[RMDB]
RNA sequence: GGGAACGACUCGAGUAGAGUCGAAAAGCUGUACGCUUCGGCGUACAGCAAAUAAAAUCAGCGGUUAUAAAGCAGGCGUUAUAACCGCUGAACGCCUGCUUAAAAGUACUACCUUCGGGUAGUACAACAUCGUAGUAUUCUUCGGAAUACUACGAUGAAAAGAAACAACAACAACAAC
Reactivity to DMS in 0.01 (KOAc 150mM, MgCl2 10mM, bicine 150mM(pH8.5), 24C), signal-to-noise 3, nucleotides 027 to 126: g000c010u000g020u000a010c000g020c000u010u010c190g050g020c000g000u010a010c000a010g010c010a000a020a010u010a080a060a130a070u000c010a000g010c000g000g000u000u000a030u000a020a040a080g010c070a060g010g010c060g010u010u000a020u000a020a010c000c000g000c000u000g000a010a010c140g000c010c000u000g020c100u000u010a040a060a120a130g000u000a010c000u010a010c000c000u000u010c210g020g010g010u000a000g010u000a000c010a070a120
Reactivity to 2A3 in 0.01 (KOAc 150mM, MgCl2 10mM, bicine 150mM(pH8.5), 24C), signal-to-noise 4, nucleotides 027 to 126: g000c010u010g000u010a000c000g020c010u040u100c260g110g020c010g000u010a000c000a000g000c010a000a000a000u000a000a010a000a060u020c000a000g000c000g030g020u040u020a050u030a070a080a020g080c170a140g210g040c090g030u030u000a010u010a030a000c000c010g010c000u010g000a000a000c000g020c000c010u050g040c020u160u140a060a120a040a080g000u010a000c000u000a000c000c000u030u060c130g050g000g000u000a000g000u010a000c000a000a000